This 177-nucleotide RNA was probed chemically with DMS and 2A3.
The DMS profile rests on 1,104 reads.
It was measured as part of the RMDB library RFM100.
The RNA was probed in 150 mM KOAc, 10 mM MgCl2 and 150 mM bicine (pH 8.5) at 24 C.
RNA sequence: GGGAACGACUCGAGUAGAGUCGAAAAGAAAGAAAGUGCGGGCAGGCGCCGGGAAGUCUCCGAGUUGUCUUCGCGACAGCAGCGUCCAUUGCGGCGUGCAUCAGGAGCCGGGGGCCCGCGCCUUUAACACGCCUUCGUAAUUCGUUACGAAGGCGUGAAAAGAAACAACAACAACAAC
Reactivity to DMS in 0.01 (KOAc 150mM, MgCl2 10mM, bicine 150mM(pH8.5), 24C), signal-to-noise 1, nucleotides 027 to 126: g020a080a130a160g010a080a080a130g000u000g020c000g010g010g010c060a170g060g020c080g000c030c000g000g000g060a080a090g000u130c030u000c010c000g000a130g000u000u000g050u000c030u000u050c110g000c160g010a000c040a000g000c000a280g020c000g000u020c030c000a250u030u050g000c080g000g000c020g000u000g030c030a130u060c300a200g000g030a030g000c000c000g000g000g020g050g020c000c040c000g030c010g000c000c030u030u000u030a130a100
Reactivity to 2A3 in 0.01 (KOAc 150mM, MgCl2 10mM, bicine 150mM(pH8.5), 24C), signal-to-noise 3, nucleotides 027 to 126: g130a000a120a010g060a060a130a000g000u010g000c000g000g000g020c030a070g080g060c040g140c040c000g000g010g010a120a070g130u020c000u010c020c010g010a030g060u010u010g000u030c040u170u190c230g030c170g030a000c000a010g000c010a020g010c020g000u000c000c020a260u140u300g030c140g030g000c000g020u040g000c000a080u090c110a040g010g000a010g000c010c000g000g000g000g010g010c000c000c000g000c000g000c000c000u020u030u040a050a010
Notes:
In probing experiments dimethyl sulfate is read out at A N1 and C N3, which are open when not base-paired.